[RMDB]
RNA sequence: GGGAACGACUCGAGUAGAGUCGAAAAAUGGGAAUAUCAUUACCUCUCAAAAUAUCCUGAUUGAUACUAAUGAGUUAAGCAAUAAUAAAGGCAGGAUCGUUAGUGCGUUUAGUGAUAUAGAGCUACGAUACGCAGCUUUAUUCGUAAAGCUGCGUAUAAAAGAAACAACAACAACAAC
Reactivity to 2A3 in 0.01 (KOAc 150mM, MgCl2 10mM, bicine 150mM(pH8.5), 24C), signal-to-noise 2, nucleotides 027 to 126: a000u130g020g000g080a120a100u150a090u270c050a000u020u170a070c010c010u070c000u000c000a000a080a160a240u010a030u010c000c010u030g040a000u090u260g040a110u070a050c010u020a050a000u020g040a000g110u120u100a080a020g010c010a000a040u270a300a050u250a190a170a020g120g040c040a010g000g130a030u000c000g000u000u010a010g000u000g020c060g000u010u000u050a110g010u100g050a020u020a010u040a020g130a010g060c030u080a110c120g100
Reactivity to DMS in 0.01 (KOAc 150mM, MgCl2 10mM, bicine 150mM(pH8.5), 24C), signal-to-noise 3, nucleotides 027 to 126: a140u000g000g010g020a020a100u020a040u020c230a020u010u010a090c050c040u000c000u000c010a030a110a140a060u010a010u000c010c030u000g020a010u010u000g010a120u000a010c040u000a020a030u000g000a030g000u010u010a090a140g010c030a060a040u010a090a100u010a050a130a100g000g010c010a080g030g010a120u000c020g020u000u000a010g000u010g010c020g000u000u000u000a000g010u000g030a020u000a030u000a070g000a050g000c160u000a060c220g010
Chemical mapping of a 177-nucleotide RNA with 2A3 and DMS. For 2A3, 1,014 sequencing reads were counted. The reactions ran in a buffer of 150 mM KOAc, 10 mM MgCl2 and 150 mM bicine (pH 8.5), at 24 C. For 2A3 the reverse transcriptase was SuperScript II with manganese. High 2A3 reactivity points to a flexible backbone, as in loops and unpaired stretches. Reactivities are given for positions 27 through 126.